[RMDB]
RNA sequence: GGGAACGACUCGAGUAGAGUCGAAAAGAGCUGAUUCGUGAUCUGUACGAGUCCAGCCAAGCCUCCAUCUUGCUGAUCGGCGAGGAAAUGCUGCCGACCAAGCUCAAGAAGUACGAACGCUUCCAUGGCCGCGUUCUGAGCUGGGUUCCGGCCCAGCCCAGACCGUAUACUUCGGUAUACGGUCUGGAAAAGAAACAACAACAACAAC
Reactivity to 2A3 in 0.01 (KOAc 150mM, MgCl2 10mM, bicine 150mM(pH8.5), 24C), signal-to-noise 3, nucleotides 027 to 156: g040a040g000c000u010g000a010u010u020c020g020u090g070a250u080c060u240g120u130a000c010g010a000g010u030c170c060a000g000c010c000a040a000g010c000c020u060c030c010a130u040c010u050u030g000c030u020g020a080u010c000g050g000c100g060a060g060g110a090a150a070u300g040c040u130g000c020c000g000a020c000c010a080a020g010c010u020c030a020a070g010a080a050g080u110a060c060g010a040a010c010g000c030u200u060c100c070a100u130g040g000c030c020g000c010g020u000u000c020u040g010a010g000c000u020g000g000g010u090u050c030c070g060g010c000c000c000a010g000c000